[RMDB]
RNA sequence: GGGAACGACUCGAGUAGAGUCGAAAAGUCACCAACCCAACUGAGACUACAUCCCGUGAGUUUGAGCGACAGCGGAGGAAUAAGAAAGCAAGGUGUGGUGUGACCAGGCCGUGCGCACGAGUUGCGACGUAAUACGUCCCUUCGGGGACGUAUUACGAAAAGAAACAACAACAACAAC
Reactivity to DMS in 0.01 (KOAc 150mM, MgCl2 10mM, bicine 150mM(pH8.5), 24C), signal-to-noise 4, nucleotides 027 to 126: g010u010c050a090c040c060a110a130c030c020c050a100a100c110u000g000a130g020a100c040u000a080c100a160u000c040c020c010g030u000g040a090g000u000u000u000g020a110g050c100g000a040c080a200g000c040g010g020a080g030g000a080a110u000a060a070g010a070a130a080g000c030a060a100g000g000u020g010u000g000g000u000g000u010g000a080c000c040a080g000g020c080c020g020u000g020c030g010c050a060c060g010a080g020u010u000g010c010g010a130
Reactivity to 2A3 in 0.01 (KOAc 150mM, MgCl2 10mM, bicine 150mM(pH8.5), 24C), signal-to-noise 3, nucleotides 027 to 126: g030u060c020a030c080c010a040a070c010c010c000a020a070c050u100g050a010g040a140c030u020a030c050a050u040c040c000c010g030u050g000a140g050u080u150u130g120a070g000c060g040a030c020a020g000c020g030g020a070g040g070a060a080u130a080a040g140a110a060a000g020c020a040a020g010g010u060g050u030g030g060u050g000u060g070a020c040c000a020g020g020c010c010g060u060g070c010g050c010a020c020g100a060g120u130u080g050c030g000a020

This 177-nucleotide RNA was probed chemically with DMS and 2A3. Reactivities are given for positions 27 through 126. The reactions ran in a buffer of 150 mM KOAc, 10 mM MgCl2 and 150 mM bicine (pH 8.5), at 24 C. High DMS reactivity at an A or C suggests that its Watson-Crick edge is free.